This 207-nucleotide RNA was probed chemically with 2A3 and DMS. It was measured as part of the RMDB library ARCHII. The reactions ran in a buffer of 150 mM KOAc, 10 mM MgCl2 and 150 mM bicine (pH 8.5), at 24 C.
[RMDB]
RNA sequence: GGGAACGACUCGAGUAGAGUCGAAAAGCGGGCAGAAAUGGUGGGUAAGCAUGCAGUGCGUCGGUGAUUUGCACUUUAAUCUCAGUUAUCAAAAUUUUAUCUGGCGAAACUAAUUACGCUCUUGCUGCUUAAUCGAAUCAUAGUAGAUUAGCUUAAUCUUGUACUAUUAGUUCGCUAAUAGUACAAGAAAAGAAACAACAACAACAAC
Reactivity to 2A3 in 0.01 (KOAc 150mM, MgCl2 10mM, bicine 150mM(pH8.5), 24C), signal-to-noise 6, nucleotides 027 to 156: g050c040g010g000g000c030a010g080a090a080a040u100g040g020u020g020g030g010u050a020a030g010c020a020u160g010c010a010g020u010g030c010g020u040c050g010g020u030g040a080u030u050u110g020c030a030c000u090u100u080a080a090u030c030u000c050a050g010u030u040a080u080c020a030a080a140a170u110u200u120u100a090u070c040u050g030g000c030g040a070a020a020c040u050a030a140u170u090a050c020g000c010u020c010u040u100g040c020u000g000c000u070u070a030a020u050c020g010a030a010u060c090a090u090a070g020u020a010g020a050u020u020a010g000c010u030u060a050a040u060
Reactivity to DMS in 0.01 (KOAc 150mM, MgCl2 10mM, bicine 150mM(pH8.5), 24C), signal-to-noise 2, nucleotides 027 to 156: g010c020g020g030g050c030a090g000a120a030a060u010g040g050u010g010g000g010u020a090a080g030c050a060u000g040c110a030g050u000g000c000g010u000c060g030g030u020g000a040u000u000u010g030c010a040c020u000u000u000a030a070u000c010u000c030a050g010u010u000a040u020c060a060a020a110a180u020u010u000u000a100u020c070u030g030g040c030g000a080a080a300c070u000a060a060u010u000a130c050g040c000u000c110u010u000g000c000u000g000c010u020u020a040a040u000c020g010a160a150u010c120a070u010a130g000u000a110g010a020u000u000a130g020c020u000u000a050a170u000
Background: The DMS profile rests on 2,841 reads. The 2A3 profile rests on 5,374 reads.